[RMDB]
RNA sequence: GGGAACGACUCGAGUAGAGUCGAAAACACAAUGAGAUGGAGCGUCUGCUACGCAACGUCUCCUGUUCGGUCUUGGUGGUUAAGGAUAGUAAGCGGGUAGACAAACUUUAUAAUACAUUGUAAGAUACCAUCCCUUCAGUUUCGACUGAAGGGAUGGAAAAGAAACAACAACAACAAC
Reactivity to DMS in 0.01 (KOAc 150mM, MgCl2 10mM, bicine 150mM(pH8.5), 24C), signal-to-noise 3, nucleotides 027 to 126: c070a060c110a070a030u000g000a090g000a050u000g000g010a200g010c080g010u000c110u000g020c090u000a050c030g000c030a040a080c020g000u000c080u000c000c110u000g000u010u000c060g000g010u000c050u000u000g000g030u020g000g000u000u010a090a090g020g010a020u010a100g020u000a020a100g030c050g000g000g010u000a050g000a030c050a050a140a130c080u000u000u000a020u000a080a080u020a090c060a050u010u000g000u010a060a140g000a170u000a110
Reactivity to 2A3 in 0.01 (KOAc 150mM, MgCl2 10mM, bicine 150mM(pH8.5), 24C), signal-to-noise 2, nucleotides 027 to 126: c020a000c010a000a120u040g010a020g000a010u040g020g000a010g000c040g030u030c070u040g020c080u110a050c010g000c010a000a000c000g010u000c000u020c000c000u060g010u070u090c050g030g140u010c020u020u150g100g000u130g000g000u070u060a070a010g030g000a030u050a050g040u040a060a000g000c010g000g020g020u040a000g030a010c020a000a020a010c020u140u140u030a090u050a170a110u110a070c020a050u020u020g010u080a060a020g020a150u110a040